[RMDB]
RNA sequence: GGGAACGACUCGAGUAGAGUCGAAAACCACCGCAAUUCGUUGCGGUGGGAAGGUGCAAUUCGCUGUCUGCACCACAGAGGGCCAAUCCGUCAAAGCGAAAACUGGAGGGUCAUUCGUGACCCUCAACAUUACAAUGAAGUUCGCUUCAUUGUAAUGAAAAGAAACAACAACAACAAC
Reactivity to DMS in 0.01 (KOAc 150mM, MgCl2 10mM, bicine 150mM(pH8.5), 24C), signal-to-noise 9, nucleotides 027 to 126: c000c000a000c000c000g010c000a010a020u000u010c200g020u000u000g020c000g010g010u000g000g000g000a030a030g010g010u000g010c020a050a110u000u000c060g020c030u000g010u010c100u000g010c020a020c020c010a100c140a080g010a090g010g010g010c060c080a080a100u010c020c040g010u000c090a060a110a070g020c020g000a070a040a090a080c190u010g010g010a020g010g010g010u000c000a040u000u010c170g020u000g000a020c000c000c000u000c000a020a080
Reactivity to 2A3 in 0.01 (KOAc 150mM, MgCl2 10mM, bicine 150mM(pH8.5), 24C), signal-to-noise 9, nucleotides 027 to 126: c000c000a000c000c000g000c010a010a040u080u060c210g060u120u020g000c010g000g000u010g000g000g000a040a070g000g000u020g010c020a050a100u090u080c040g010c050u030g050u050c030u020g010c010a010c060c030a000c010a020g130a070g000g040g000c040c030a030a070u050c020c020g090u100c090a130a050a020g030c020g070a040a010a020a090c090u130g120g000a000g000g000g010u010c000a010u040u080c150g060u030g000a000c000c000c000u000c000a000a000